[RMDB]
RNA sequence: GGGAACGACUCGAGUAGAGUCGAAAAGCUUGUAGCUUCGGCUACAAGCAUCUAAAUUCAGCGGUAAAUAAUUACGAGGCGUUACCGCUGAACGCCUCGAUACAACCACAUCAUUCGUGAUGUGGAAUGUUAAAGAUAUAUUCGUAUAUCUUUAACAAAAAGAAACAACAACAACAAC
Reactivity to 2A3 in 0.01 (KOAc 150mM, MgCl2 10mM, bicine 150mM(pH8.5), 24C), signal-to-noise 9, nucleotides 027 to 126: g000c000u000u000g000u000a000g000c000u040u040c300g120g000c000u000a000c000a000a000g000c000a000u010c010u080a070a140a140u090u030c000a000g010c010g150g210u210a060a090a070u100a070a100u190u150a100c050g000a000g000g000c000g000u000u010a140c000c000g000c000u000g000a000a000c000g000c000c000u000c000g000a010u050a160c060a070a050c010c000a000c000a000u000c000a010u020u120c190g100u030g010a000u000g000u000g000g020a020a030
Reactivity to DMS in 0.01 (KOAc 150mM, MgCl2 10mM, bicine 150mM(pH8.5), 24C), signal-to-noise 8, nucleotides 027 to 126: g000c000u000u000g010u000a000g000c000u000u010c220g020g010c000u000a000c000a010a010g000c000a010u000c020u000a050a090a140u010u000c010a000g010c010g010g010u000a030a040a030u010a040a050u010u010a110c060g010a010g000g000c010g000u000u000a070c030c000g000c000u000g000a010a010c010g000c010c000u010c010g010a230u010a060c200a090a170c000c000a010c000a000u000c000a040u000u010c200g010u000g000a010u000g010u000g000g000a020a020